This 177-nucleotide RNA was probed chemically with 2A3.
For 2A3, 402 sequencing reads were counted.
RNA sequence: GGGAACGACUCGAGUAGAGUCGAAAAUAUUCGUCAAACUCCUUGACCGACACGAACGUAAGCACGGGGAGGGUGAACACGACAAACUCCCCCUCACGGGUCACCUUCAGGUAGGCGUGGAGCUUGGUGCGUACCGACGGUUCGCCGUCGGUACGCAAAAAGAAACAACAACAACAAC
Reactivity to 2A3 in 0.01 (KOAc 150mM, MgCl2 10mM, bicine 150mM(pH8.5), 24C), signal-to-noise 1, nucleotides 027 to 126: u230a010u160u180c050g000u010c020a000a010a000c000u000c060c000u090u300g130a300c000c000g020a020c000a000c090g030a030a000c090g010u050a020a010g040c000a000c050g130g040g000g000a000g030g000g000u030g000a050a050c140a110c110g300a000c020a000a100a000c000u000c000c100c000c000c030u000c000a000c030g060g070g020u040c020a080c030c000u100u090c020a040g210g000u000a040g000g000c000g050u070g000g000a000g030c020u000u000g000g000

The RNA was probed in 150 mM KOAc, 10 mM MgCl2 and 150 mM bicine (pH 8.5) at 24 C. For 2A3 the reverse transcriptase was SuperScript II with manganese.